[RMDB]
RNA sequence: GGGAACGACUCGAGUAGAGUCGAAAAACGUUUUUUCCACUCUUGGCCCAAACCAAACCGCAAAGAGCCGCUUGAUGGCCAACUGACUGACUGAAGCGGCAAGAGCAGCAGCAGCAGCAGCAGCAAAGCAUAUAUAUGCUUUCGAGCAUAUAUAUGCAAAAGAAACAACAACAACAAC
Reactivity to 2A3 in 0.01 (KOAc 150mM, MgCl2 10mM, bicine 150mM(pH8.5), 24C), signal-to-noise 9, nucleotides 027 to 126: a000c130g030u110u050u000u000u030u020c020c020a040c020u080c030u020u050g040g030c030c010c000a040a040a060c030c020a080a080a070c030c030g040c040a110a120a010g060a040g030c020c010g030c050u060u080g060a110u160g120g020c020c010a030a030c040u070g200a080c000u020g050a060c010u060g030a070a000g010c010g010g000c020a010a000g040a000g030c040a010g000c010a000g000c000a000g000c000a000g000c000a000g000c000a000g020c020a070a050a010
Reactivity to DMS in 0.01 (KOAc 150mM, MgCl2 10mM, bicine 150mM(pH8.5), 24C), signal-to-noise 4, nucleotides 027 to 126: a110c130g010u020u010u000u000u020u000c010c010a160c100u010c080u000u000g010g020c010c020c030a050a130a120c090c060a020a070a110c060c100g010c060a040a070a090g020a150g020c000c020g000c050u010u020g000a120u040g000g000c020c030a060a100c080u010g000a130c060u000g000a090c040u000g000a050a060g000c020g020g000c020a070a060g010a090g000c030a020g020c010a050g020c050a050g000c030a000g010c050a030g000c080a030g010c120a050a040a140